[RMDB]
RNA sequence: GGGAACGACUCGAGUAGAGUCGAAAAGUGAUGUCAACUUAAACCAGCCAUCAUAUGUCUGGUUAGACCAGAAAGACAUUUAGGCCCUGACUGGUCCACUUGUUCCAUCGGAGCUUCAGGUGCUGGAGUGUUCAUAAGCUUUCGAGCUUAUGAACACAAAAGAAACAACAACAACAAC
Reactivity to DMS in 0.01 (KOAc 150mM, MgCl2 10mM, bicine 150mM(pH8.5), 24C), signal-to-noise 3, nucleotides 027 to 126: g010u010g020a050u000g020u000c040a100a140c120u020u000a030a050a030c030c040a010g010c060c020a040u000c230a100u040a300u020g020u000c000u000g000g000u000u010a050g000a220c040c060a090g000a090a140a140g000a060c010a020u000u000u000a190g010g000c040c010c030u020g000a060c150u000g020g030u000c010c040a050c090u030u000g010u000u000c010c020a100u020c130g010g000a070g010c040u000u000c050a060g000g020u010g030c020u010g020g020a220
Reactivity to 2A3 in 0.01 (KOAc 150mM, MgCl2 10mM, bicine 150mM(pH8.5), 24C), signal-to-noise 2, nucleotides 027 to 126: g060u020g030a050u040g010u060c040a070a040c080u090u170a070a020a010c000c000a010g020c060c010a060u140c040a040u090a040u260g000u000c010u020g020g020u010u030a020g030a010c000c000a020g090a050a040a000g020a010c020a000u100u120u140a110g000g000c010c000c030u020g000a030c040u040g000g120u000c050c000a030c040u080u150g040u100u000c030c050a070u140c130g100g020a030g060c010u080u050c030a030g090g010u080g070c010u020g030g050a080
Chemical mapping of a 177-nucleotide RNA with DMS and 2A3. The DMS profile rests on 1,824 reads. Values cover nucleotides 27 to 126. 2A3 adducts were read by reverse transcription with SuperScript II with manganese. DMS (dimethyl sulfate) methylates the pairing face of unpaired adenines and cytosines. The RNA was probed in 150 mM KOAc, 10 mM MgCl2 and 150 mM bicine (pH 8.5) at 24 C.